[RMDB]
RNA sequence: GGGAACGACUCGAGUAGAGUCGAAAAGAAAAUUUAGUUCUGUAUCUUCCAGUUGGAAAAAUAUAUUGCAGGUUAUUCCCUCUGCUGAUUUGCUAGAUUAUUGAUCUAAUUUUGUUGGUUAACAUAAGAAGGCAAGCUCAGCUGCCUGCUAGAGUGAUGAUAUAGCCCUAUUCGUAGGGCUAUAUCAAAAAGAAACAACAACAACAAC
Reactivity to DMS in 0.01 (KOAc 150mM, MgCl2 10mM, bicine 150mM(pH8.5), 24C), signal-to-noise 1, nucleotides 027 to 156: g000a050a030a120a150u000u000u000a150g020u000u000c040u040g010u000a020u000c040u000u000c010c010a230g020u000u000g010g000a030a110a090a100a110u000a070u010a050u000u000g010c030a020g000g040u010u000a130u000u000c020c000c020u000c020u000g010c010u000g000a020u000u000u040g000c000u000a060g000a300u000u000a070u000u020g000a130u000c040u000a040a070u000u000u000u000g000u000u000g000g000u000u000a070a100c090a060u000a080a040g000a190a300g000g000c010a020a020g020c110u000c020a080g010c050u000g010c010c020u000g010c000u010a040g010a130g010u010g000a190

Background:
This 207-nucleotide RNA was probed chemically with DMS. High DMS reactivity at an A or C suggests that its Watson-Crick edge is free. Conditions: 150 mM KOAc, 10 mM MgCl2 and 150 mM bicine (pH 8.5), 24 C.